[RMDB]
RNA sequence: GGGAACGACUCGAGUAGAGUCGAAAAGCUUCAGCAUAAGACUUUUGGGAACAUAAUUCAGAGCCAGUGUGGUUGGGGGUACGAGGCUGGACAGGGAAGUAGCGGCUCCCCGCAAAGAACAGAGGUGCAGUCCCAGGAAGACAGCAGAGCAUGGCCAUACCACCUAGUAUUUCGAUACUAGGUGGUAAAAAGAAACAACAACAACAAC
Reactivity to DMS in 0.01 (KOAc 150mM, MgCl2 10mM, bicine 150mM(pH8.5), 24C), signal-to-noise 1, nucleotides 027 to 156: g060c020u000u000c010a110g000c050a150u000a100a140g010a130c010u000u000u000u000g000g020g010a120a060c060a120u010a040a240u000u020c000a020g000a090g060c040c040a090g020u010g130u000g010g000u000u000g000g010g010g000g010u100a080c030g000a050g000g020c080u020g040g010a070c040a020g010g050g040a070a100g010u000a130g010c060g030g000c010u000c000c000c000c000g100c060a030a060a130g020a020a120c100a100g000a140g050g040u000g010c020a080g010u010c010c000c050a060g000g010a130a060g010a080c000a090g000c010a080g010a120g020c020a100u010g030g000c010c060a200
Reactivity to 2A3 in 0.01 (KOAc 150mM, MgCl2 10mM, bicine 150mM(pH8.5), 24C), signal-to-noise 1, nucleotides 027 to 156: g010c010u170u230c040a040g000c020a180u170a180a000g000a100c010u100u070u100u120g040g000g020a090a060c060a120u200a160a180u230u070c030a030g010a020g040c030c010a040g030u020g020u050g120g040u010u060g040g060g000g000g000u020a010c020g030a030g060g000c020u030g010g020a010c040a050g010g000g010a000a100g040u080a010g020c020g020g000c010u000c000c000c000c000g000c010a120a110a000g050a040a000c020a070g000a010g040g000u090g000c020a040g030u020c000c040c010a000g000g000a040a000g070a010c020a010g020c020a010g060a010g040c050a100u070g060g030c000c010a010